[RMDB]
RNA sequence: GGGAACGACUCGAGUAGAGUCGAAAAGAGGGCUCGGAAGUAUCAGAUACUGUUGCUAUCUCAGGGAGUUUACAGGCUAUUGGAGAGACAAAACCAAUUCACAUGAAAGAGUGAUGAGUGUGUAAUUAUUCACUAAAUCCUACAGUAUGGUACAUUCGAACUAUAACCAGUUCGCUGGUUAUAGUUCAAAAGAAACAACAACAACAAC
Reactivity to DMS in 0.01 (KOAc 150mM, MgCl2 10mM, bicine 150mM(pH8.5), 24C), signal-to-noise 4, nucleotides 027 to 156: g000a090g010g000g000c020u010c050g010g010a080a100g000u000a070u010c050a070g030a170u010a060c050u000g010u000u000g000c040u000a110u000c040u010c040a120g020g030g010a110g000u010u000u010a060c070a080g020g010c040u000a120u000u000g020g020a110g020a160g010a110c090a050a050a080a120c050c020a040a110u010u000c030a070c030a090u010g010a100a090a120g010a110g010u000g000a050u000g000a190g030u000g020u010g010u010a040a090u030u000a160u010u000c030a040c060u000a000a050a080u000c010c020u000a060c060a080g000u000a060u000g010g010u000a090c050a280u000u000c060
Reactivity to 2A3 in 0.01 (KOAc 150mM, MgCl2 10mM, bicine 150mM(pH8.5), 24C), signal-to-noise 6, nucleotides 027 to 156: g040a010g000g040g010c060u060c080g010g040a080a040g010u050a070u090c040a020g040a120u060a090c020u030g030u080u050g040c040u050a050u140c030u030c090a040g020g030g020a030g010u030u050u080a060c030a010g010g030c020u040a050u060u100g020g000a030g010a000g020a040c050a020a140a010a020c030c010a010a060u070u080c030a020c020a060u110g090a120a050a060g060a040g040u060g000a050u040g020a010g050u070g000u000g010u040a040a040u080u140a070u050u110c020a000c020u020a000a060a100u050c010c010u080a070c010a010g060u090a050u220g020g030u100a050c040a080u110u200c190
The record gives the reactivity of an RNA of 207 nucleotides to DMS and 2A3. Reactivities are given for positions 27 through 156. For 2A3 the reverse transcriptase was SuperScript II with manganese. DMS adducts were read by reverse transcription with MarathonRT. For DMS, 9,803 sequencing reads were counted. The reactions ran in a buffer of 150 mM KOAc, 10 mM MgCl2 and 150 mM bicine (pH 8.5), at 24 C.